[RMDB]
RNA sequence: GGGAACGACUCGAGUAGAGUCGAAAAGAUAUGGAAUGAACUGCAGGGAGCUAUGUGGUCGGAAACGACCACCUAGCAUCGAUCUGUUUCAUUCCUAAGUCAAAAGAUGAAGGUUCGCCUUCAUCAAGUCUGAUAUAGCGUUCGCGCUAUAUCAGACAAAAGAAACAACAACAACAAC
Reactivity to DMS in 0.01 (KOAc 150mM, MgCl2 10mM, bicine 150mM(pH8.5), 24C), signal-to-noise 2, nucleotides 027 to 126: g010a010u000a100u000g000g020a010a000u010g020a010a060c300u020g020c100a010g020g000g000a020g020c000u000a010u000g010u000g000g020u000c010g010g010a040a020a040c000g000a020c010c000a000c010c030u010a010g000c000a300u010c180g010a050u000c010u010g000u000u000u000c010a000u000u000c000c010u010a030a090g000u000c020a110a090a070a180g000a010u000g010a020a010g020g010u010u030c300g010c000c000u000u000c000a010u000c010a040a080
Reactivity to 2A3 in 0.01 (KOAc 150mM, MgCl2 10mM, bicine 150mM(pH8.5), 24C), signal-to-noise 2, nucleotides 027 to 126: g000a010u040a000u080g010g020a000a010u000g010a020a040c190u300g000c050a020g030g080g130a300g010c000u000a000u010g010u000g010g000u000c010g000g020a000a030a010c000g000a010c000c000a010c000c010u000a010g030c020a020u180c080g070a160u000c000u020g050u040u040u000c010a000u000u010c000c000u010a020a000g000u000c020a030a040a040a160g020a000u000g010a010a000g040g050u050u230c300g150c050c000u010u010c000a000u010c010a010a020
This 177-nucleotide RNA was probed chemically with DMS and 2A3. The RNA was probed in 150 mM KOAc, 10 mM MgCl2 and 150 mM bicine (pH 8.5) at 24 C. The 2A3 profile rests on 3,736 reads. For DMS the reverse transcriptase was MarathonRT.